[RMDB]
RNA sequence: GGGAACGACUCGAGUAGAGUCGAAAACUUUGCAUUAAUGUCUUGGGAGCUCAGGGAAUACUUCGUAGUCACUGAAUACCUAAUUAAAGAGCAUUUUGUACCUCUCUUCAAGGGUCUCACUAUGGCAAACGAAAAGUGUUUUCGAACACUUUUCGUUAAAAGAAACAACAACAACAAC
Reactivity to DMS in 0.01 (KOAc 150mM, MgCl2 10mM, bicine 150mM(pH8.5), 24C), signal-to-noise 3, nucleotides 027 to 126: c080u000u010u020g020c070a050u000u010a040a050u010g020u010c090u010u010g010g000g020a300g030c220u020c010a030g010g010g010a050a050u010a020c040u010u010c190g010u010a040g010u000c040a050c030u010g000a020a110u010a160c020c020u010a030a070u000u020a030a050a080g000a070g000c050a060u010u000u000u000g010u000a060c100c040u000c020u000c030u000u000c060a080a150g000g000g000u010c050u000c070a050c070u010a050u000g020g000c130a070
Reactivity to 2A3 in 0.01 (KOAc 150mM, MgCl2 10mM, bicine 150mM(pH8.5), 24C), signal-to-noise 2, nucleotides 027 to 126: c020u060u100u140g010c030a080u020u080a120a010u130g040u030c050u050u050g010g020g030a040g030c020u010c040a020g040g040g020a060a000u030a050c030u120u130c130g060u050a030g010u000c030a010c070u010g010a000a020u110a160c010c000u060a090a080u170u090a130a120a020g070a020g000c010a020u030u020u060u140g020u040a110c010c000u040c000u000c030u060u020c040a040a050g100g020g000u010c010u000c000a040c010u080a080u130g050g000c040a060